[RMDB]
RNA sequence: GGGAACGACUCGAGUAGAGUCGAAAAGCUGCCUUGAGUGGUGCAGGCUCUCUGGAAGGAUGUGUGUGCUGUUGUAGGUCAGGCCUCCUGGAUGACCGGGCCUCUGCCACUAACACUUCUUGCCAGUCCCCAUGGGAUCUCGUGGAGGCUCACGCCACCCGUAAUUAUGCUUCGGCAUAAUUACGGGAAAAGAAACAACAACAACAAC
Reactivity to 2A3 in 0.01 (KOAc 150mM, MgCl2 10mM, bicine 150mM(pH8.5), 24C), signal-to-noise 1, nucleotides 027 to 156: g060c070u080g020c010c000u110u070g050a060g030u080g020g040u060g040c040a020g040g000c000u020c000u000c000u090g020g050a070a040g100g020a100u110g030u020g030u010g010u020g050c040u030g000u070u010g010u110a000g000g010u030c050a010g060g000c000c000u130c070c020u070g050g030a110u120g040a100c060c000g000g010g000c020c010u030c010u050g020c020c000a070c010u060a110a000c020a020c000u080u150c000u040u110g120c010c000a020g030u060c030c000c000c010a160u170g050g000g010a060u010c070u050c100g080u080g020g040a070g050g000c100u090c050a010c100g020c040c050a020
Structure probing data (2A3) for a 207-nucleotide construct. Conditions: 150 mM KOAc, 10 mM MgCl2 and 150 mM bicine (pH 8.5), 24 C. For 2A3, 1,400 sequencing reads were counted.